This 207-nucleotide RNA was probed chemically with DMS and 2A3. For 2A3, 11,824 sequencing reads were counted. For 2A3 the reverse transcriptase was SuperScript II with manganese. The DMS profile rests on 10,743 reads.
RNA sequence: GGGAACGACUCGAGUAGAGUCGAAAAUGAACGUUAUGCUAUUGGUUAUAAUUAUCGCGUUUAAAAAAGAGAUUAAGAGGGUAAAAUGAAAGCUUAUUUAUACGACGUGUUUCAUAGAUGUGAUUCCAUAACUGAUUGGACUCCCACUGCGUGUACACUCACAUUAUUGUUUCGACAAUAAUGUGAGAAAAGAAACAACAACAACAAC
Reactivity to DMS in 0.01 (KOAc 150mM, MgCl2 10mM, bicine 150mM(pH8.5), 24C), signal-to-noise 4, nucleotides 027 to 156: u010g000a110a080c140g020u000u000a050u000g020c030u000a050u020u000g030g020u010u000a090u000a050a090u010u000a050u010c030g000c040g040u000u000u000a000a050a090a090a080a130g010a090g000a080u000u010a070a070g010a080g020g020g010u000a040a070a090a100u010g010a060a050a100g020c040u000u000a120u010u000u000a090u000a140c050g020a050c040g030u000g010u000u000u000c050a100u000a080g000a080u000g020u000g010a120u000u010c030c020a050u010a030a080c050u000g010a160u010u000g010g010a070c090u000c000c000c000a100c090u000g020c040g010u000g010u000a100c070a130
Reactivity to 2A3 in 0.01 (KOAc 150mM, MgCl2 10mM, bicine 150mM(pH8.5), 24C), signal-to-noise 9, nucleotides 027 to 156: u070g010a060a010c050g010u080u060a040u100g030c030u040a070u100u120g040g020u150u080a100u060a150a090u110u100a050u100c030g000c010g010u020u040u110a060a070a010a010a010a000g060a000g010a030u090u120a080a030g020a050g060g030g010u040a030a090a060a060u100g050a100a030a010g000c010u060u040a060u090u200u050a110u080a060c060g040a020c040g040u030g040u040u050u070c060a060u050a040g070a090u050g050u030g030a040u040u020c010c000a010u040a130a070c050u070g040a110u050u030g020g020a020c020u010c010c010c000a040c020u050g020c030g020u040g010u030a020c040a000

Conditions: 150 mM KOAc, 10 mM MgCl2 and 150 mM bicine (pH 8.5), 24 C. For DMS the reverse transcriptase was MarathonRT. The data come from the RNA Mapping Database (RMDB), library OK3TST.